[RMDB]
RNA sequence: GGGAACGACUCGAGUAGAGUCGAAAACGAGAUGAGUUCGCUCAUCUCGAAAGAACCGCGGGCGUGACUCGGUCAGAGCAUGACAGGCGCUGCGGUCUCGAAAAAGUGGUGUGUUCGCACACCACAAUCUAUACACUUAGUUCGCUAAGUGUAUAGAAAAAGAAACAACAACAACAAC
Reactivity to 2A3 in 0.01 (KOAc 150mM, MgCl2 10mM, bicine 150mM(pH8.5), 24C), signal-to-noise 9, nucleotides 027 to 126: c010g000a000g000a010u010g000a000g060u060u130c180g060c080u000c000a000u000c000u000c000g000a000a020a010g010a030a010c010c000g000c050g050g030g010c010g020u050g130a160c040u080c190g080g020u040c050a020g030a060g200c160a100u040g020a020c010a020g070g000c010g000c010u000g000c000g000g030u000c050u020c030g080a100a070a000a010a010g010u000g000g000u000g000u010g020u030u070c220g020c070a000c000a000c000c000a000c000a000a000
Reactivity to DMS in 0.01 (KOAc 150mM, MgCl2 10mM, bicine 150mM(pH8.5), 24C), signal-to-noise 9, nucleotides 027 to 126: c020g000a010g010a010u000g010a020g010u000u010c220g010c010u000c000a010u000c000u000c000g000a020a070a100g000a080a060c000c010g010c010g010g010g010c000g020u000g010a170c070u010c140g010g010u000c060a040g000a180g010c160a100u010g000a040c050a110g000g000c010g010c010u000g010c010g000g000u000c050u000c030g010a060a060a050a110a090g010u000g000g010u000g020u000g010u000u010c210g010c010a010c000a000c000c000a000c000a030a030